[RMDB]
RNA sequence: GGGAACGACUCGAGUAGAGUCGAAAAAGAGCCGGAUACGUCCGGCUCAACGGGGGAUACGUGUGGUGCCGUCCGCUCCCCCUAUGGCAUAACAAAUGCACCACACACUAGGCUACUGCCUAGUGAAAAAAUCCCUACAUGUUCGCAUGUAGGGAAAGCCGUAUUCUAAGUUCGCUUAGAAUACGGCAAAAGAAACAACAACAACAAC
Reactivity to 2A3 in 0.01 (KOAc 150mM, MgCl2 10mM, bicine 150mM(pH8.5), 24C), signal-to-noise 2, nucleotides 027 to 156: a000g010a000g000c000c000g000g010a000u010a040c090g120u010c000c000g010g020c000u000c000a000a000c010g000g000g000g000g010a020u030a110c030g030u000g000u000g070g000u000g010c010c030g010u020c010c040g100c030u000c000c000c000c000c000u010a120u140g100g050c050a050u090a210a080c050a070a040a020u100g000c000a000c010c000a000c000a000c000a000c000u010a010g000g010c010u180a020c120u300g010c000c000u000a000g000u030g020a100a000a000a000a000a050u050c000c000c000u000a000c000a000u010g020u030u030c080g030c130a000u000g000u010a000g000g000g020a000a000a010
Source information
The record gives the reactivity of an RNA of 207 nucleotides to 2A3. The RNA was probed in 150 mM KOAc, 10 mM MgCl2 and 150 mM bicine (pH 8.5) at 24 C. For 2A3, 984 sequencing reads were counted.